[RMDB]
RNA sequence: GGGAACGACUCGAGUAGAGUCGAAAAGUCCAAGGUGAUUCCCUCUCCAAAGGGCUGACUGUGUGCCACUUUCAGGAACAGCAAUUUGGAAGAAAGCCAGGCAUGCCUGAGGUCUUUGAUGAACAAGACUUAAAAGCCCAUUCGUGGGCUUUUAAGUAAAAGAAACAACAACAACAAC
Reactivity to DMS in 0.01 (KOAc 150mM, MgCl2 10mM, bicine 150mM(pH8.5), 24C), signal-to-noise 4, nucleotides 027 to 126: g010u010c020c020a100a080g020g000u010g000a160u010u000c000c010c010u010c040u000c020c010a030a030a050g000g010g020c000u010g010a180c120u010g010u000g010u020g000c030c070a100c020u000u010u020c000a040g020g040a150a160c030a040g000c090a070a040u000u010u000g000g000a060a100g000a020a050a140g000c060c070a080g030g030c030a050u010g020c010c010u000g000a190g010g000u010c000u020u000u000g000a100u020g000a080a130c190a080a060g000
Reactivity to 2A3 in 0.01 (KOAc 150mM, MgCl2 10mM, bicine 150mM(pH8.5), 24C), signal-to-noise 3, nucleotides 027 to 126: g030u040c030c020a090a120g090g040u120g030a080u000u050c010c040c000u000c000u000c000c030a000a080a030g010g050g010c000u020g030a070c010u010g020u010g020u050g130c040c010a080c040u040u060u020c050a070g050g080a160a140c020a030g120c040a060a140u110u130u150g080g020a040a080g010a130a060a000g030c020c080a040g020g000c020a040u120g010c020c020u010g020a020g010g050u000c010u010u040u070g100a070u030g000a030a030c030a060a130g060